[RMDB]
RNA sequence: GGGAACGACUCGAGUAGAGUCGAAAAGACCGUACCCUGACCAACGGGGAUGUCGUCCGGCUGGCCGAGGAGCGGGAGUUCGACGUGCGCCGCUGCAAUCUGGACAAGGCUGCGCUGCGUGCGUGGUUCGAGGCCCAGUGCGCUGGCUGGCGCAAGCCGCUAAAACACGAUUCGUCGUGUUUUAGCGAAAAGAAACAACAACAACAAC
Reactivity to 2A3 in 0.01 (KOAc 150mM, MgCl2 10mM, bicine 150mM(pH8.5), 24C), signal-to-noise 3, nucleotides 027 to 156: g050a000c000c010g010u080a100c020c000c010u030g060a100c040c020a060a050c040g000g030g020g050a010u130g150u230c080g080u010c030c020g000g050c110u020g020g030c020c030g100a080g000g010a050g000c020g020g050g010a090g040u030u090c050g040a030c080g110u020g000c000g000c000c000g000c020u030g000c000a010a020u010c000u000g000g030a050c050a050a050g020g000c020u010g000c010g000c010u090g030c080g170u230g000c000g000u010g000g020u100u290c010g030a050g050g120c000c000c000a000g010u020g010c020g000c060u110g070g040c090u130g010g000c000g020c000a000a000g020c000
Reactivity to DMS in 0.01 (KOAc 150mM, MgCl2 10mM, bicine 150mM(pH8.5), 24C), signal-to-noise 2, nucleotides 027 to 156: g030a140c010c000g060u010a150c020c010c000u030g010a120c000c060a060a070c020g000g010g030g010a100u000g020u000c180g010u000c000c000g040g000c010u020g020g070c040c010g020a140g000g030a300g030c010g010g000g010a180g020u000u000c030g010a060c060g000u010g030c010g020c010c060g000c020u010g000c000a040a250u000c010u020g020g020a080c070a130a290g000g010c000u010g050c020g000c040u040g000c130g000u010g010c000g060u000g030g010u020u020c070g020a280g030g040c010c010c000a030g010u000g020c300g000c000u000g020g010c000u020g020g000c010g010c030a020a050g000c050